About this RNA:
This 177-nucleotide RNA was probed chemically with 2A3 and DMS. Source: RMDB library OK1LIB, as collected in RNAgym. The RNA was probed in 150 mM KOAc, 10 mM MgCl2 and 150 mM bicine (pH 8.5) at 24 C.
RNA sequence: GGGAACGACUCGAGUAGAGUCGAAAAGAAAGAGAGGUUUUUUGCCGUUCUCGAACUGUGUUUUAUACACUGUGAGUUGUGUAUGAAGCGUAGAAAGAAUACGCUCACGAAAGUACGGCUAAAGAAACCCAACUAUAUAGUUCGCUAUAUAGUUGGGAAAAGAAACAACAACAACAAC
Reactivity to 2A3 in 0.01 (KOAc 150mM, MgCl2 10mM, bicine 150mM(pH8.5), 24C), signal-to-noise 7, nucleotides 027 to 126: g080a000a080a010g180a010g040a090g000g100u050u030u000u000u040u090g010c000c010g000u030u010c050u020c030g020a050a020c020u050g000u000g030u060u020u030u130a060u020a010c010a000c010u040g020u060g140a190g110u190u170g020u060g030u040a050u070g060a090a020g000c000g000u010a010g090a120a180a010g080a050a040u050a030c010g000c020u030c010a030c050g080a120a040a020g020u020a010c000g000g000c020u080a040a000a020g060a030a050a020
Reactivity to DMS in 0.01 (KOAc 150mM, MgCl2 10mM, bicine 150mM(pH8.5), 24C), signal-to-noise 7, nucleotides 027 to 126: g000a080a060a070g000a070g010a120g010g000u000u010u010u010u010u010g000c010c010g010u000u000c000u010c060g000a100a120c130u010g000u010g000u010u020u010u010a050u010a010c020a000c000u010g010u010g010a090g020u020u020g010u020g000u010a040u010g000a080a040g010c010g010u000a020g000a120a100a130g020a150a090u010a000c040g000c000u000c020a050c050g000a130a100a060g000u010a010c000g000g010c020u010a050a040a080g000a080a100a110